RNA sequence: GGGAACGACUCGAGUAGAGUCGAAAAAAAAAAGAUAUGGACUAGGGAGCAGACUUGCCUAUGAAGUCGCUCGGAAACGAGCGAUGGAGGCAAGAUAACUGCGAAGAACUAGUCCUAAGUCAAAAAACAUUGUAUGUAGGUUCGCCUACAUACAAUGAAAAGAAACAACAACAACAAC
Reactivity to 2A3 in 0.01 (KOAc 150mM, MgCl2 10mM, bicine 150mM(pH8.5), 24C), signal-to-noise 3, nucleotides 027 to 126: a000a000a010a040a010a020g090a050u120a060u110g000g020a000c010u000a000g020g040g010a040g000c010a020g120a300c020u000u010g000c000c000u300a300u290g020a020a000g020u000c000g000c000u000c000g000g010a090a090a010c000g010a010g020c000g000a000u000g000g000a000g000g010c000a000a000g000a010u030a040a010c010u000g000c000g040a060a030g020a000a030c000u000a000g010u030c000c000u000a030a020g040u020c020a070a030a030a090a120a080
Reactivity to DMS in 0.01 (KOAc 150mM, MgCl2 10mM, bicine 150mM(pH8.5), 24C), signal-to-noise 4, nucleotides 027 to 126: a000a010a100a090a060a110g010a030u010a300u010g000g000a020c000u000a000g010g000g010a190g010c020a000g020a170c000u010u000g000c010c000u010a200u020g000a140a200g000u000c000g000c000u000c000g000g000a110a100a150c000g000a010g030c000g000a010u000g000g000a010g010g000c000a010a000g000a060u020a040a040c000u000g010c000g020a120a130g010a160a140c020u000a010g000u000c000c000u000a020a080g010u020c040a000a020a080a060a080a080
An RNA of 177 nucleotides, treated with 2A3 and DMS and read out base by base. Source: RMDB library TTRDES, as collected in RNAgym. As a SHAPE reagent, 2A3 marks flexible, mostly unpaired nucleotides at the ribose 2'-OH. Conditions: 150 mM KOAc, 10 mM MgCl2 and 150 mM bicine (pH 8.5), 24 C.